Chemical mapping of a 207-nucleotide RNA with 2A3. Source: RMDB library OK3TST, as collected in RNAgym. For 2A3 the reverse transcriptase was SuperScript II with manganese. The reactions ran in a buffer of 150 mM KOAc, 10 mM MgCl2 and 150 mM bicine (pH 8.5), at 24 C. High 2A3 reactivity points to a flexible backbone, as in loops and unpaired stretches.
RNA sequence: GGGAACGACUCGAGUAGAGUCGAAAAGCUUGACCAAAUGUGUGGGCACCCUGUGGCCUAGGCAGGUUGACACAUAAAGUUAACUAUCACAAGGUGUUAAUGAGAUUUCUUGUCUGUGGCUGGGUAGGGACCCCAGAUCCCCCAGACUUGCUCAUUGGCGUCUGCCUAGAUUCGUCUAGGCAGACGCAAAAGAAACAACAACAACAAC
Reactivity to 2A3 in 0.01 (KOAc 150mM, MgCl2 10mM, bicine 150mM(pH8.5), 24C), signal-to-noise 2, nucleotides 027 to 156: g040c060u100u110g050a080c010c060a080a100a200u190g030u020g000u070g000g160g010c040a060c020c020c000u010g050u060g100g060c060c120u110a140g040g000c050a000g000g000u030u040g040a010c000a010c010a080u150a050a040a030g000u020u030a080a080c080u080a080u300c040a080c070a200a110g100g000u040g030u060u080a030a030u020g000a000g020a070u100u190u110c010u000u090g000u000c000u000g040u020g030g020c040u020g010g000g040u070a160g080g050g130a070c070c000c000c000a010g000a110u180c010c020c000c020c000a000g000a000c000u010u020g000c010u030c000a030u060u020g040